[RMDB]
RNA sequence: GGGAACGACUCGAGUAGAGUCGAAAAAAUAUGCUCGACAGGCUGCCUGUCCGACAGAGCUUUUAGAUCUUCUGAUCUUUCCCUGCAGCUUAUCGCUUAUGCAUCAAGCGAUUGUCGGAUCACACAACUGAUAUGUGGUCUUCGGACCACAUAUCAGAAAAGAAACAACAACAACAAC
Reactivity to DMS in 0.01 (KOAc 150mM, MgCl2 10mM, bicine 150mM(pH8.5), 24C), signal-to-noise 2, nucleotides 027 to 126: a020a060u020a040u010g010c030u000c000g000a090c200a060g000g020c010u000g010c020c210u010g000u010c020c010g010a020c030a100g000a090g000c060u010u000u000u000a020g020a030u000c010u010u010c300u000g010a000u000c000u000u000u000c010c010c010u000g010c040a040g000c010u010u000a090u010c010g020c050u000u000a120u000g010c170a090u000c130a000a010g000c010g010a040u000u010g000u000c010g010g010a090u010c170a050c100a100c180a050a100
Reactivity to 2A3 in 0.01 (KOAc 150mM, MgCl2 10mM, bicine 150mM(pH8.5), 24C), signal-to-noise 1, nucleotides 027 to 126: a010a020u300a090u100g010c020u020c030g080a040c050a030g020g020c020u010g010c000c040u100g110u050c000c000g010a000c010a000g020a000g020c000u000u000u030u030a010g010a010u040c030u230u000c250u300g000a000u010c000u000u010u010c020c000c040u010g020c020a010g000c010u020u020a010u000c010g000c010u050u020a030u200g130c050a130u150c080a130a000g020c000g050a060u030u040g010u000c000g000g030a050u090c050a030c020a020c000a140a200